The record gives the reactivity of an RNA of 177 nucleotides to 2A3 and DMS. The DMS profile rests on 2,026 reads.
RNA sequence: GGGAACGACUCGAGUAGAGUCGAAAAGAUAUGGAUCUGUGGUCAAGGACUUGGAUUUAUCGGAAACGAUUGUCAGUCUGACCCAGAUCCUAAGUCAAACCGAGCAGAACUUCGGUUCUGCUCGGAACUGUAGAUACGUCUUCGGACGUAUCUACAGAAAAGAAACAACAACAACAAC
Reactivity to 2A3 in 0.01 (KOAc 150mM, MgCl2 10mM, bicine 150mM(pH8.5), 24C), signal-to-noise 3, nucleotides 027 to 126: g020a020u050a040u180g010g000a010u000c020u030g170u300g220g000u040c110a190a230g240g020a040c040u180u290g180g000a040u300u300u150a040u070c010g010g030a090a030a030c000g010a010u000u040g030u040c020a020g010u000c060u060g000a000c000c010c000a000g000a000u000c000c000u000a020a000g020u030c010a060a010a110c000c000g020a010g000c000a000g000a070a020c010u130u220c300g110g000u000u000c000u000g000c000u000c000g000g000a000a000
Reactivity to DMS in 0.01 (KOAc 150mM, MgCl2 10mM, bicine 150mM(pH8.5), 24C), signal-to-noise 2, nucleotides 027 to 126: g000a020u010a300u010g000g000a030u000c000u000g020u010g040g000u000c000a110a130g000g000a010c020u020u010g060g010a020u010u000u010a010u000c010g020g010a100a070a180c000g010a000u000u000g010u000c010a020g010u000c010u000g000a010c000c010c000a010g000a000u000c000c010u010a010a080g000u010c020a170a090a120c010c010g010a020g000c000a000g000a030a020c000u010u010c170g030g000u000u000c000u000g000c010u000c000g010g000a000a030